[RMDB]
RNA sequence: GGGAACGACUCGAGUAGAGUCGAAAACAGGUCGGACCGCGGGGAGGUGGAGAUGCCAUGCCGACCCGAAGAGGAAAGAAGGACUCGGACGCGAACCCGUGAGUGGAAACCUCGUUCUUUAUUGGGGAUAGUGAUUUCUUCGGAAAUCACAAAAGAAACAACAACAACAAC
Reactivity to DMS in 0.01 (KOAc 150mM, MgCl2 10mM, bicine 150mM(pH8.5), 24C), signal-to-noise 7, nucleotides 027 to 129: c140a080g020g040u010c050g020g020a060c000c040g000c000g000g000g000g000a070g020g000u040g010g000a080g000a080u040g040c040c110a080u010g040c000c000g020a060c050c020c060g000a050a070g030a050g000g060a020a030a030g030a080a050g000g040a030c040u020c100g030g030a070c100g020c080g000a070a110c050c030c020g000u050g000a080g030u000g000g000a060a080a080c060c010u000c000g000u040u010c080u020u020u040a110u060u060g000g000g000g000a070u000a100
Reactivity to 2A3 in 0.01 (KOAc 150mM, MgCl2 10mM, bicine 150mM(pH8.5), 24C), signal-to-noise 9, nucleotides 027 to 129: c040a000g010g060u020c010g040g030a050c020c020g020c020g030g000g000g000a040g000g000u070g010g000a110g010a030u160g040c030c020a050u120g020c000c000g030a020c000c000c030g020a040a020g050a030g020g020a050a030a010g040a010a010g020g000a020c030u030c060g010g000a010c030g000c020g030a040a050c000c000c020g030u050g030a020g010u110g000g000a070a040a040c010c000u020c010g060u130u040c050u080u200u130a210u070u170g010g000g000g040a030u070a050

An RNA of 170 nucleotides, treated with DMS and 2A3 and read out base by base. The reactions ran in a buffer of 150 mM KOAc, 10 mM MgCl2 and 150 mM bicine (pH 8.5), at 24 C.